[RMDB]
RNA sequence: GGGAACGACUCGAGUAGAGUCGAAAACAAGGUGUGUGUACCCCCACCCGAAGCUAAACAAGGUCUUUGCUAGUAAAACAGGAGUAGCGAAGAGUGAAAUCUUUUAUGAGCUGUGAUUUUGGGAGCAGACUCGAUUACCUUUCGAGGUAAUCGAGUCAAAAGAAACAACAACAACAAC
Reactivity to DMS in 0.01 (KOAc 150mM, MgCl2 10mM, bicine 150mM(pH8.5), 24C), signal-to-noise 1, nucleotides 027 to 126: c120a060a100g050g000u000g010u000g040u000g000u000a160c090c010c000c100c010a140c020c020c000g030a170a090g030c030u000a050a080a120c080a020a020g010g000u000c030u000u010u010g010c060u000a080g010u000a020a050a100a090c160a120g000g010a080g010u000a060g040c090g000a060a130g000a170g000u000g000a030a120a060u000c040u000u000u000u000a070u010g010a030g000c030u000g010u000g000a110u030u010u010u030g010g060g010a000g050c040a120
Annotation
Structure probing data (DMS) for a 177-nucleotide construct. Source: RMDB library OK2TST, as collected in RNAgym. For DMS, 682 sequencing reads were counted. Reactivities are given for positions 27 through 126.